[RMDB]
RNA sequence: GGGAACGACUCGAGUAGAGUCGAAAAGCCCAGCCCUGUCGCCCCCCCGGAGGUGAUCCCUCCCUCCUGCCUCCCCGCCAGCCUGACCUGUGCCUGGCUCGCGGGCCGCAGUCUCGGCCCCGGCGCGGAGCCUUAAUAACUUCGGUUAUUAAGGCUCAAAAGAAACAACAACAACAAC
Reactivity to 2A3 in 0.01 (KOAc 150mM, MgCl2 10mM, bicine 150mM(pH8.5), 24C), signal-to-noise 5, nucleotides 027 to 126: g010c010c000c000a010g010c010c010c020u070g050u060c030g020c010c000c000c000c000c000c000g020g010a010g010g040u080g040a080u040c000c000c010u010c000c000c000u010c000c000u020g020c000c010u030c020c000c000c000g000c010c010a010g010c010c000u040g040a070c010c010u050g020u050g050c010c010u020g050g000c030u030c020g030c050g010g000g000c000c010g010c010a040g070u020c030u020c070g020g000c010c000c000c030g010g000c030g000c020g060
Reactivity to DMS in 0.01 (KOAc 150mM, MgCl2 10mM, bicine 150mM(pH8.5), 24C), signal-to-noise 5, nucleotides 027 to 126: g010c010c000c010a130g000c040c010c010u010g010u000c050g010c010c010c010c020c020c020c040g000g000a030g000g010u010g000a120u020c040c010c010u000c030c010c030u010c010c010u000g020c040c030u000c040c020c020c030g000c030c030a060g010c020c010u010g000a100c070c060u000g000u010g020c040c020u010g010g010c010u000c130g010c110g020g000g010c050c030g010c150a090g010u020c050u020c030g010g000c000c000c020c030g000g010c070g030c130g000
The record gives the reactivity of an RNA of 177 nucleotides to 2A3 and DMS. The reactions ran in a buffer of 150 mM KOAc, 10 mM MgCl2 and 150 mM bicine (pH 8.5), at 24 C. Source: RMDB libraries RFM100 and RFMREP, as collected in RNAgym. For 2A3, 14,196 sequencing reads were counted.